The record gives the reactivity of an RNA of 177 nucleotides to DMS.

RNA sequence: GGGAACGACUCGAGUAGAGUCGAAAAGAUAUGGAAUCCACGCCGUAUGCCCUGCGAGGGAGACCACUAUCGGAAACGAUAGAAGGUCAUCGAUCUCGUCAGGGCAUACGGCGUGGAUUCCUAAGUCCGAUAUGUCCUAGUUCGCUAGGACAUAUCGAAAAGAAACAACAACAACAAC
Reactivity to DMS in 0.01 (KOAc 150mM, MgCl2 10mM, bicine 150mM(pH8.5), 24C), signal-to-noise 2, nucleotides 027 to 126: g000a100u020a300u010g030g010a060a030u000c000c010a010c000g010c010c000g010u010a010u000g010c000c000c000u010g000c020g000a050g000g010g000a020g000a020c010c000a300c000u000a000u000c010g020g000a140a130a250c000g030a010u010a000g010a130a110g050g010u000c010a160u000c220g000a070u000c000u000c000g020u010c010a030g000g020g030c010a010u000a000c000g000g000c000g000u000g000g000a000u000u000c010c000u000a020a120g010u000c060
Reactivities are given for positions 27 through 126. The reactions ran in a buffer of 150 mM KOAc, 10 mM MgCl2 and 150 mM bicine (pH 8.5), at 24 C. It was measured as part of the RMDB library TTRINS.